[RMDB]
RNA sequence: GGGAACGACUCGAGUAGAGUCGAAAACAUGGGAAGAGGCGUUCCGCAUCGCCUACCGGAUCAUGAAGGGCGGGGACAUCACCCCCGAGAUGCAGCGCAUGGAGACGAUCUGGCGCGACCCGUCGACUCCGACGUACGCGGCGAAGGCCGACGCGGCGUACAUAUGGAGCUUCGGCUCCAUAUGUACAAAAGAAACAACAACAACAAC
Reactivity to 2A3 in 0.01 (KOAc 150mM, MgCl2 10mM, bicine 150mM(pH8.5), 24C), signal-to-noise 4, nucleotides 027 to 156: c040a130u170g050g040g020a070a080g030a080g070g010c010g020u080u040c030c020g000c030a030u050c010g000c000c020u040a150c020c010g010g000a050u100c060a090u190g080a110a100g050g010g040c030g010g000g000g020a020c030a130u090c060a100c000c030c000c000c010g040a040g010a060u070g000c070a050g020c010g010c090a100u130g100g000a030g010a050c080g010a040u030c050u070g020g010c010g000c000g020a100c000c010c000g020u010c010g010a030c030u000c010c020g030a050c040g040u100a030c100g020c030g020g000c010g060a100a050g120g000c020c010g060a030c030g000c030g030g020c020
Reactivity to DMS in 0.01 (KOAc 150mM, MgCl2 10mM, bicine 150mM(pH8.5), 24C), signal-to-noise 1, nucleotides 027 to 156: c060a030u000g030g000g010a100a100g010a100g010g000c020g010u010u010c000c070g030c070a120u000c040g020c000c030u000a140c050c030g010g000a150u000c050a090u000g020a160a120g000g000g040c110g020g000g000g020a140c060a130u000c040a090c050c000c000c030c000g000a090g000a040u010g020c000a160g040c070g010c000a140u010g000g000a140g010a260c070g000a120u000c040u010g020g010c000g000c000g010a120c040c000c030g000u000c010g000a090c010u010c010c000g040a120c050g020u010a030c120g000c000g040g040c000g030a130a080g000g040c040c040g000a050c040g000c040g020g030c070